Structure probing data (DMS and 2A3) for a 177-nucleotide construct. Reactivities are rounded to 0.1 and cut off at 0 and 3. For DMS the reverse transcriptase was MarathonRT. It was measured as part of the RMDB library RFMREP. For 2A3, 1,247 sequencing reads were counted. Reactivities are given for positions 27 through 126.
[RMDB]
RNA sequence: GGGAACGACUCGAGUAGAGUCGAAAAUGAACUAUAAUUGUUCAUUGAAGUCAUUGAUGCAAACUCCUUGGUCACACACACAUACGGCGCGGAAGGCGUGUUUGCUGACGUUUCCAUUCCCUUGUUUUUCAACAGUUAAGUUCGCUUAACUGUUGAAAAAAGAAACAACAACAACAAC
Reactivity to DMS in 0.01 (KOAc 150mM, MgCl2 10mM, bicine 150mM(pH8.5), 24C), signal-to-noise 2, nucleotides 027 to 126: u000g000a000a000c000u000a090u000a080a110u010u000g020u000u000c000a000u010u000g000a090a200g000u000c050a080u010u000g000a110u000g040c050a080a090a090c050u000c030c030u000u020g030g010u020c050a180c090a050c060a020c140a070c140a130u010a030c080g020g000c030g000c050g010g000a060a130g010g010c180g020u000g020u000u010u000g000c010u000g010a260c230g010u000u000u000c030c050a300u000u000c000c000c000u010u010g010u010u010u010
Reactivity to 2A3 in 0.01 (KOAc 150mM, MgCl2 10mM, bicine 150mM(pH8.5), 24C), signal-to-noise 2, nucleotides 027 to 126: u000g020a000a000c030u030a050u150a300a280u290u100g000u010u000c000a000u010u030g060a070a010g030u040c030a060u020u190g080a040u150g040c020a020a000a070c030u030c030c000u060u010g060g030u140c000a040c000a000c000a000c000a000c000a050u080a170c040g030g020c040g010c000g060g140a030a000g070g000c040g050u120g030u030u000u050g020c000u030g020a000c020g000u040u010u000c020c000a040u000u040c000c000c000u030u120g000u110u030u000
For 2A3 the reverse transcriptase was SuperScript II with manganese.